[RMDB]
Structure probing data (DMS and 2A3) for a 177-nucleotide construct.
The RNA was probed in 150 mM KOAc, 10 mM MgCl2 and 150 mM bicine (pH 8.5) at 24 C.
For DMS the reverse transcriptase was MarathonRT.
RNA sequence: GGGAACGACUCGAGUAGAGUCGAAAACUGAGGGUAGGAGUGAAAGGCUAAUCAAACCCCGUGAUAGCUGGUUCUCUUCGAAAUGCAUUUAGGUGCAGCGUCACGUGCUGAUGCGCGGGGGUAGAGCAUCCGCUCUGUCAUUCGUGACAGAGCGGAUAAAAGAAACAACAACAACAAC
Reactivity to DMS in 0.01 (KOAc 150mM, MgCl2 10mM, bicine 150mM(pH8.5), 24C), signal-to-noise 3, nucleotides 027 to 126: c060u000g020a030g020g010g010u000a040g030g020a050g010u000g020a040a130a230g020g010c020u000a060a050u010c020a070a120a130c030c020c000c020g020u020g000a060u020a030g000c040u010g000g000u010u000c030u010c050u000u000c060g020a050a080a160u030g000c040a020u010u020u050a110g000g020u000g020c030a060g010c070g020u020c020a070c060g030u050g000c050u010g010a060u010g020c040g010c040g000g000g000g010g000u000a090g010a100g010c120
Reactivity to 2A3 in 0.01 (KOAc 150mM, MgCl2 10mM, bicine 150mM(pH8.5), 24C), signal-to-noise 3, nucleotides 027 to 126: c030u020g010a070g000g000g010u040a010g010g050a030g030u080g110a110a010a000g020g030c010u040a080a030u030c040a000a080a280c000c000c000c000g000u000g020a040u030a060g000c010u030g060g140u130u030c100u000c000u080u060c030g070a070a110a090u210g000c140a090u020u080u130a090g110g000u020g030c030a040g000c000g090u050c010a060c110g070u070g000c030u110g000a080u110g010c030g000c000g010g040g020g010g000u070a020g010a010g050c010